Structure probing data (DMS and 2A3) for a 177-nucleotide construct. The data come from the RNA Mapping Database (RMDB), library M2PK50. Reactivities are given for positions 27 through 126. DMS adducts were read by reverse transcription with MarathonRT. The reactions ran in a buffer of 150 mM KOAc, 10 mM MgCl2 and 150 mM bicine (pH 8.5), at 24 C. For DMS, 6,092 sequencing reads were counted.

RNA sequence: GGGAACGACUCGAGUAGAGUCGAAAAGACGGAUUCUUCGGAAUCCGUCAAAGUGACGGUGAAAAAUGGCCAAUGCGCCUGCUACCACCGACACAGGGCGCAAAACUGGAGUGUUCGCACUCCAGAACUUUACGGAAAAGUUCGCUUUUCCGUAAAGAAAAGAAACAACAACAACAAC
Reactivity to DMS in 0.01 (KOAc 150mM, MgCl2 10mM, bicine 150mM(pH8.5), 24C), signal-to-noise 5, nucleotides 027 to 126: g010a010c000g020g000a000u000u000c000u000u010c220g020g000a020a000u000c000c000g010u000c000a010a030a070g010u000g020a120c010g020g000u000g010a020a070a060a110a130u000g010g010c000c050a130a090u010g020c160g010c000c000u000g000c180u010a150c170c010a040c000c010g010a100c020a010c020a200g010g010g010c100g030c100a070a060a090a190c010u000g000g010a010g020u000g000u000u020c170g010c000a030c000u000c000c000a000g000a020a050
Reactivity to 2A3 in 0.01 (KOAc 150mM, MgCl2 10mM, bicine 150mM(pH8.5), 24C), signal-to-noise 3, nucleotides 027 to 126: g000a000c000g000g010a010u020u000c030u040u070c210g030g000a000a000u000c010c010g000u000c000a000a000a000g000u000g010a010c010g000g000u020g070a060a020a010a040a110u160g020g000c030c040a170a270u200g030c160g000c050c000u000g000c000u060a060c000c050a000c000c000g010a000c010a000c000a010g040g080g000c080g000c080a050a080a010a040c010u000g000g010a000g000u010g000u070u140c180g030c080a000c000u000c000c010a000g000a000a000